[RMDB]
RNA sequence: GGGAACGACUCGAGUAGAGUCGAAAACUUGGGUGGAGACAUUUAGGAGUUAUCGGAAGAUGGCGGAGGUACCGACGCCAGUGGGCCGGAUGAAACGGGGUACCGAGAAUACGUGGAUAGUGCGUGGGUACGACAUGUAUGCUCAGCUUACGGCGAGGGAAUAUAUGUUUUUCGAGAUAUGUAUUCCAAAAGAAACAACAACAACAAC
Reactivity to 2A3 in 0.01 (KOAc 150mM, MgCl2 10mM, bicine 150mM(pH8.5), 24C), signal-to-noise 2, nucleotides 027 to 156: c030u060u050g020g040g010u060g020g050a050g030a040c040a120u110u120u110a070g030g000a040g030u060u050a100u120c060g000g040a020a050g030a080u060g010g010c020g020g060a010g010g070u050a090c040c030g040a010c020g000c000c000a010g010u070g020g010g000c030c000g030g000a040u060g030a040a090a000c050g030g020g030g000u000a040c010c020g030a030g000a090a050u100a040c040g020u030g010g040a070u010a030g060u050g050c030g020u020g020g040g000u030a010c020g010a000c040a020u030g040u070a040u040g010c000u010c070a050g020c010u060u060a030c040g010g010c000g010a040g000
Reactivity to DMS in 0.01 (KOAc 150mM, MgCl2 10mM, bicine 150mM(pH8.5), 24C), signal-to-noise 2, nucleotides 027 to 156: c060u000u000g010g000g050u000g010g010a140g010a070c050a100u000u000u000a070g040g000a120g060u010u000a090u010c040g020g000a090a110g020a140u000g020g050c050g020g000a110g010g020u000a070c030c020g030a060c030g050c020c020a050g020u000g010g010g040c000c040g050g000a090u010g020a050a070a130c060g010g010g010g030u000a050c010c010g000a060g000a050a050u000a030c050g020u010g010g020a120u010a090g030u000g010c010g000u000g020g010g070u000a050c040g000a030c020a020u010g000u000a030u000g000c000u000c030a090g020c070u000u010a060c060g020g020c010g020a150g020
Chemical mapping of a 207-nucleotide RNA with 2A3 and DMS. Values cover nucleotides 27 to 156. The reactions ran in a buffer of 150 mM KOAc, 10 mM MgCl2 and 150 mM bicine (pH 8.5), at 24 C. The data come from the RNA Mapping Database (RMDB), library OK3TST.